[RMDB]
RNA sequence: GGGAACGACUCGAGUAGAGUCGAAAAAAAUCUUCAUGCGCGUAAAUGUGAUCUUUGAAGGUGGUGCUGUGGUCAUCAUCUAUGUAAUCAAAUGACGGGUCAAAACUUGAUAUCGGGCCACCACCAAAAGCGUCAUAAGGGUCAUAAGAUAUACACGAGAUCCUCUAUAUUUCGAUAUAGAGGAUCUAAAAGAAACAACAACAACAAC
Reactivity to 2A3 in 0.01 (KOAc 150mM, MgCl2 10mM, bicine 150mM(pH8.5), 24C), signal-to-noise 3, nucleotides 027 to 156: a000a000a040u060c000u070u040c060a040u050g030c050g030c030g140u110a060a090a140u150g010u040g020a030u030c050u040u040u070g120a140a060g020g010u040g010g010u070g020c090u050g090u100g060g020u020c010a080u010c000a000u030c060u120a080u030g110u110a050a100u120c070a070a100a090u110g020a040c030g050g030g010u040c020a010a010a120a210c050u030u060g020a030u060a090u160c060g020g000g000c030c000a000c000c000a000c000c010a060a000a020a020g020c000g010u010c020a020u030a100a150g040g040g050u030c000a000u010a050a020g020a030u070a020u050a150c020a000c070g040
Reactivity to DMS in 0.01 (KOAc 150mM, MgCl2 10mM, bicine 150mM(pH8.5), 24C), signal-to-noise 2, nucleotides 027 to 156: a030a070a040u000c000u000u010c060a090u000g050c010g010c030g000u000a020a060a230u010g010u010g000a010u000c010u010u000u010g020a160a140g060g050u000g020g010u010g000c030u010g020u000g010g010u010c030a030u000c020a030u000c020u010a060u010g030u020a080a050u010c080a060a140a080u010g010a070c060g030g020g020u000c040a060a050a050a080c060u010u000g000a080u010a060u000c030g010g010g000c020c030a020c030c000a050c010c030a050a070a080a160g040c060g000u010c040a060u010a050a090g000g000g030u000c030a050u000a010a090g010a100u010a150u000a040c020a040c030g000

Description:
Chemical mapping of a 207-nucleotide RNA with 2A3 and DMS. Values are in units of 0.01, from 0 to 300, in steps of 10. The reactions ran in a buffer of 150 mM KOAc, 10 mM MgCl2 and 150 mM bicine (pH 8.5), at 24 C. For 2A3, 1,549 sequencing reads were counted. The DMS profile rests on 4,274 reads.